Source: RMDB library OK2TST, as collected in RNAgym.
This 177-nucleotide RNA was probed chemically with 2A3 and DMS.
2A3 adducts were read by reverse transcription with SuperScript II with manganese.
Reactivities are given for positions 27 through 126.
The 2A3 profile rests on 1,771 reads.
The DMS profile rests on 15,002 reads.

[RMDB]
RNA sequence: GGGAACGACUCGAGUAGAGUCGAAAAAUGGUCGUCCUGGCAGUAAGUAUUGUGAAUCGUGGGGGAAAAGCCAUCAUCUCGAGACAAUUUCGUGAGAUGUCUCGUGUAAGAGUAGAAAGCCUUUUGAAUAAAUACCUAAUUUCGAUUAGGUAUUUAUAAAAGAAACAACAACAACAAC
Reactivity to 2A3 in 0.01 (KOAc 150mM, MgCl2 10mM, bicine 150mM(pH8.5), 24C), signal-to-noise 2, nucleotides 027 to 126: a020u090g010g000u010c020g020u000c000c000u010g070g000c000a010g050u120a130a000g030u040a110u200u230g080u030g080a120a040u060c050g030u070g010g010g040g030g000a000a090a000a040g040c010c000a020u030c000a010u020c020u000c020g020a010g020a010c040a060a190u070u150u110c160g030u110g070a120g000a030u010g020u000c000u000c020g000u010g030u060a090a070g010a010g030u070a030g070a060a060a030g030c000c020u040u110u070u020g050a110
Reactivity to DMS in 0.01 (KOAc 150mM, MgCl2 10mM, bicine 150mM(pH8.5), 24C), signal-to-noise 8, nucleotides 027 to 126: a080u000g010g020u000c050g010u000c020c020u000g010g020c030a080g010u010a060a090g010u000a060u000u000g020u010g010a080a070u000c070g020u000g010g010g000g010g000a060a050a070a090g010c040c030a080u000c060a090u010c020u000c010g000a020g010a020c030a060a130u000u010u000c080g000u010g000a150g010a080u000g010u000c010u000c010g010u000g010u010a060a090g010a080g010u000a080g010a090a100a150g000c070c040u000u010u000u010g000a160